[RMDB]
Chemical mapping of a 207-nucleotide RNA with DMS and 2A3. 2A3 adducts were read by reverse transcription with SuperScript II with manganese. The RNA was probed in 150 mM KOAc, 10 mM MgCl2 and 150 mM bicine (pH 8.5) at 24 C. Source: RMDB library OK3TST, as collected in RNAgym. For DMS, 2,441 sequencing reads were counted. Values cover nucleotides 27 to 156.
RNA sequence: GGGAACGACUCGAGUAGAGUCGAAAAACGGCGAUAUGGUCGGAUCGGUCGUUGAGUACAAGAUCGAGAUGGCGGUAGAUGGUGCAAGUUAUCAGACCUACCUAACUGGCAAGAUUGACGGUAAGAACACGACUGGCGGUUACGAUCGGAGCAUUCGCAUCCCGAAGAAUUUCGAUUCUUCGGGAUGAAAAGAAACAACAACAACAAC
Reactivity to DMS in 0.01 (KOAc 150mM, MgCl2 10mM, bicine 150mM(pH8.5), 24C), signal-to-noise 2, nucleotides 027 to 156: a130c000g030g000c010g030a090u010a050u000g020g050u000c010g040g010a110u000c020g030g040u000c020g000u000u000g010a230g060u010a080c070a130a200g030a060u000c030g000a150g050a130u000g020g010c020g040g090u000a040g010a070u000g000g050u000g020c060a130a110g010u010u000a080u000c050a120g000a070c070c020u010a030c010c040u010a030a050c080u010g000g060c030a040a140g010a070u000u010g120a080c060g040g010u000a060a140g020a070a080c000a210c050g030a050c030u000g000g030c070g000g010u000u000a080c050g000a050u000c030g010g010a080g030c030a160u000u000c070g020
Reactivity to 2A3 in 0.01 (KOAc 150mM, MgCl2 10mM, bicine 150mM(pH8.5), 24C), signal-to-noise 2, nucleotides 027 to 156: a000c020g030g000c010g020a020u020a030u200g090g010u040c050g060g010a040u030c010g000g020u030c040g020u030u070g080a040g070u100a090c100a130a010g050a120u060c040g010a030g000a080u050g000g010c010g000g000u020a010g000a030u030g010g000u030g060c080a120a050g030u110u070a050u130c050a030g070a140c010c000u020a030c000c020u030a050a060c030u030g060g010c020a030a070g020a150u060u130g020a050c010g040g020u060a070a030g030a090a010c090a010c100g070a030c020u010g030g000c000g020g050u010u090a030c010g000a010u020c010g050g000a020g000c030a040u060u040c020g000